[RMDB]
RNA sequence: GGGAACGACUCGAGUAGAGUCGAAAAUACCAUGUUGGAAGAUGAAUUCACACCUGAGGAUGUUAAUAUGCAGAUUAUGGGUGUGGUUAUGCAGAGUGGUGUGAGAAAAGUUACAUAUGGUACUGCGACACGUCGGUCUUCGGACCGACGAAAAGAAACAACAACAACAAC
Reactivity to 2A3 in 0.01 (KOAc 150mM, MgCl2 10mM, bicine 150mM(pH8.5), 24C), signal-to-noise 2, nucleotides 027 to 129: u170a000c000c000a000u000g000u000u050g000g000a100a000g000a100u000g030a000a190u100u110c000a000c000a030c000c010u000g050a040g060g000a020u050g000u040u130a120a130u210a230u300g000c030a000g170a270u000u040a040u300g000g000g000u070g000u000g020g030u050u060a000u000g000c000a020g010a010g180u090g020g030u000g000u050g090a090g110a000a110a030a030g020u080u040a020c000a050u020a060u120g000g000u060a000c000u130g010c000g010a000c060a000
Reactivity to DMS in 0.01 (KOAc 150mM, MgCl2 10mM, bicine 150mM(pH8.5), 24C), signal-to-noise 1, nucleotides 027 to 129: u030a150c070c000a230u070g000u000u000g000g080a000a000g000a070u000g020a040a080u020u040c010a050c010a020c000c010u010g020a180g000g000a000u020g030u000u060a000a000u050a070u040g070c020a090g020a070u000u000a100u030g020g020g040u130g050u010g100g000u000u030a050u110g020c050a000g030a060g000u050g000g020u030g010u090g000a010g000a200a050a120a060g000u080u000a170c110a120u060a030u040g090g000u040a070c110u030g050c080g040a100c120a260